[RMDB]
RNA sequence: GGGAACGACUCGAGUAGAGUCGAAAAAGCUAACUUGGUCGCACCGAAAUUGCCUUUAGUUAGUGCGUCAGACAAACGGUUGCUAUCUUGAUCUUGAACUAUCGCAAAUAUGAGUUUCAAAGAAAUAACGUCACUAUGGGUUCGCCCAUAGUGACGUAAAAGAAACAACAACAACAAC
Reactivity to 2A3 in 0.01 (KOAc 150mM, MgCl2 10mM, bicine 150mM(pH8.5), 24C), signal-to-noise 1, nucleotides 027 to 126: a000g000c010u040a010a030c010u050u040g000g040u140c020g060c020a010c040c040g070a070a110a120u050u100g090c040c020u130u110u010a040g050u010u060a030g010u060g100c010g070u020c010a030g010a240c020a080a100a020c080g060g000u000u050g010c010u010a030u120c000u020u100g030a010u020c030u020u010g010a030a040c040u070a070u230c050g000c090a040a180a030u250a120u170g030a030g020u050u060u100c070a090a090a090g070a030a190a020u190a010
Reactivity to DMS in 0.01 (KOAc 150mM, MgCl2 10mM, bicine 150mM(pH8.5), 24C), signal-to-noise 2, nucleotides 027 to 126: a010g020c010u010a000a040c020u000u000g000g060u000c070g000c030a140c030c000g000a020a080a080u000u000g000c070c040u000u040u010a120g010u000u000a090g010u020g000c030g040u000c120a060g000a080c180a030a020a140c110g020g000u000u000g040c060u010a040u000c030u000u010g000a090u000c010u010u010g010a080a030c100u000a090u000c170g000c190a050a070a080u020a120u010g000a140g020u000u010u000c020a020a070a110g010a080a140a110u020a080